The record gives the reactivity of an RNA of 177 nucleotides to DMS and 2A3. Reactivities are given for positions 27 through 126. The DMS profile rests on 1,325 reads. The RNA was probed in 150 mM KOAc, 10 mM MgCl2 and 150 mM bicine (pH 8.5) at 24 C.
RNA sequence: GGGAACGACUCGAGUAGAGUCGAAAACAACUUGUUCAGUGAUGAAGUCAUGGAAUAAGCGCUGGGCACAGCGCCCGAGCCUGAUGAGGAGAUAUUCCUUGCUGCCUUCCUUCUGAGAACAGCCAUCGAAUUGUAUUCGGUUCGCCGAAUACAAUUCAAAAGAAACAACAACAACAAC
Reactivity to DMS in 0.01 (KOAc 150mM, MgCl2 10mM, bicine 150mM(pH8.5), 24C), signal-to-noise 2, nucleotides 027 to 126: c110a130a160c090u020u000g010u010u000c020a160g010u000g020a080u010g040a080a060g020u000c020a020u000g000g010a020a040u010a140a150g020c050g030c020u000g000g000g000c300a120c060a030g000c030g030c010c050c000g000a110g000c040c040u010g000a120u010g000a040g000g030a070g020a100u020a060u010u000c020c000u000u000g010c110u000g000c030c050u000u000c020c040u010u010c010u000g010a150g020a060a020c050a030g000c120c080a090u000c120
Reactivity to 2A3 in 0.01 (KOAc 150mM, MgCl2 10mM, bicine 150mM(pH8.5), 24C), signal-to-noise 2, nucleotides 027 to 126: c000a040a030c030u060u080g020u030u020c010a050g020u020g080a070u020g070a080a040g020u050c020a060u110g020g050a080a060u090a150a000g030c000g000c050u070g030g050g000c100a060c070a230g040c080g000c020c000c030g060a040g030c000c010u100g030a130u080g050a080g070g030a050g020a040u120a090u180u000c010c000u000u050g070c030u020g020c000c010u010u030c000c010u070u090c040u070g080a130g030a040a000c010a030g040c040c020a110u120c090